[RMDB]
An RNA of 177 nucleotides, treated with 2A3 and DMS and read out base by base. Values cover nucleotides 27 to 126.
RNA sequence: GGGAACGACUCGAGUAGAGUCGAAAAUUGGUGGAUGAACUUCUCGCUUUACCUUCUAGGUAGCUUAAUCAGUAUAGUAGUUAGUCUGCUCUAAAAACCAACGAACCAGAAGUUAGGUUUUGGAUCGGAUGUUUAGGGUGUUCGCACCCUAAACAUCAAAAGAAACAACAACAACAAC
Reactivity to 2A3 in 0.01 (KOAc 150mM, MgCl2 10mM, bicine 150mM(pH8.5), 24C), signal-to-noise 1, nucleotides 027 to 126: u150u140g010g010u030g010g040a100u010g020a060a020c000u030u000c030u030c040g040c000u150u070u080a010c000c000u110u190c100u240a080g000g000u000a000g010c000u030u150a160a140u130c030a020g060u080a080u100a210g070u010a010g000u000u030a010g000u000c040u010g000c000u000c030u200a150a080a060a020a000c000c000a010a020c010g020a020a050c010c000a080g060a090a010g100u110u220a110g000g130u010u020u020u050g030g020a100u140c040g020
Reactivity to DMS in 0.01 (KOAc 150mM, MgCl2 10mM, bicine 150mM(pH8.5), 24C), signal-to-noise 2, nucleotides 027 to 126: u000u010g010g020u000g010g030a040u010g010a070a060c050u000u000c030u000c150g000c050u000u000u000a000c030c010u000u020c130u010a070g020g010u000a040g000c100u000u010a120a100u010c140a080g050u010a130u000a060g010u000a020g000u000u000a180g010u000c030u000g000c050u010c090u020a030a020a040a050a050c010c000a130a160c040g000a100a120c090c070a030g010a040a070g010u000u000a110g020g000u000u000u000u000g010g000a060u000c050g030